Structure probing data (2A3 and DMS) for a 207-nucleotide construct.
Source: RMDB library M2RFPK, as collected in RNAgym.
The 2A3 profile rests on 3,304 reads.
The RNA was probed in 150 mM KOAc, 10 mM MgCl2 and 150 mM bicine (pH 8.5) at 24 C.

[RMDB]
RNA sequence: GGGAACGACUCGAGUAGAGUCGAAAACAUAAGACCUCAGAGCUAAUGAGCCACAUACCUACCCAAGGUGAAAGCUCCUUCUCUCGCAAAGUGUAACUCAUGAUUCUCAUGACCCCUGGUUGGAGAGCGCGCUAACACGCCUUCGGGCGUGUUAGAACAUAAACAUUUACUUCGGUAAAUGUUUAUGAAAAGAAACAACAACAACAAC
Reactivity to 2A3 in 0.01 (KOAc 150mM, MgCl2 10mM, bicine 150mM(pH8.5), 24C), signal-to-noise 4, nucleotides 027 to 156: c030a050u150a110a040g060a050c010c030u070c090a050g000a010g040c060u110a120a060u070g010a020g030c020c030a080c040a110u250a040c000c010u030a060c000c020c040a050a030g020g000u030g020a090a040a000g010c010u020c010c000u070u040c020u000c000u030c030g010c070a080a100a030g040u110g020u130a060a060c010u010c040a030u030g040a160u250u060c100u040c080a050u070g040a090c000c000c000c010u000g050g040u030u030g010g020a050g000a020g050c110g000c010g000c000u000a000a000c000a000c000g020c000c000u020u040c240g050g000g010c000g000u000g000u000u000a000g000a000a000
Reactivity to DMS in 0.01 (KOAc 150mM, MgCl2 10mM, bicine 150mM(pH8.5), 24C), signal-to-noise 3, nucleotides 027 to 156: c040a150u010a050a090g010a070c030c050u010c040a080g030a090g030c090u010a100a080u010g010a080g010c020c020a090c090a160u010a070c050c010u000a130c060c040c080a160a100g020g010u000g000a090a090a110g000c030u000c020c040u000u000c040u000c000u000c050g000c040a090a070a090g030u000g000u000a040a060c060u040c010a070u000g000a120u010u000c050u010c020a090u000g010a160c010c010c000c020u030g000g020u000u000g000g000a090g020a070g010c080g000c070g030c000u010a020a020c000a010c010g050c000c010u000u000c300g050g010g020c000g040u000g010u000u000a000g010a060a110